[RMDB]
RNA sequence: GGGAACGACUCGAGUAGAGUCGAAAACUUCUGGGUUAUUUUUUGCUGCCGAACACAUUUGGUUUUUAUUCCACGAAAGAUGCUGCCAGAAGAAAAGCGAGAAACCCGAGAAAAGCUGAAGCUGGAGGACUAAUGCAUACUUCGGUAUGCAUUAGUCAAAAGAAACAACAACAACAAC
Reactivity to 2A3 in 0.01 (KOAc 150mM, MgCl2 10mM, bicine 150mM(pH8.5), 24C), signal-to-noise 4, nucleotides 027 to 126: c010u010u020c000u000g020g000g040u100u130a180u110u080u010u020u070u040g010c040u030g030c060c040g090a140a040c100a010c040a210u070u090u090g050g090u040u090u000u110u190a170u150u070c050c040a080c070g050a100a040a020g070a020u070g020c000u050g050c010c010a010g040a040a000g020a010a090a020a010g060c060g010a030g090a050a070a040c020c010c020g010a050g090a100a100a000a010g020c070u080g060a080a000g050c030u070g010g060a050g010
Reactivity to DMS in 0.01 (KOAc 150mM, MgCl2 10mM, bicine 150mM(pH8.5), 24C), signal-to-noise 2, nucleotides 027 to 126: c040u020u010c000u000g010g000g050u040u010a010u020u020u000u010u000u010g000c130u000g000c060c050g010a070a080c220a080c100a150u020u010u020g010g030u010u000u010u030u030a120u040u030c050c030a100c120g000a000a020a070g000a070u000g000c070u000g000c000c000a030g010a000a000g000a060a040a050a040g000c050g000a060g000a030a020a090c000c000c000g000a110g010a100a040a090a100g030c000u010g020a080a130g010c080u000g000g000a200g000
Structure probing data (2A3 and DMS) for a 177-nucleotide construct.
The 2A3 profile rests on 1,580 reads.
Reactivities are given for positions 27 through 126.
The DMS profile rests on 2,924 reads.
The RNA was probed in 150 mM KOAc, 10 mM MgCl2 and 150 mM bicine (pH 8.5) at 24 C.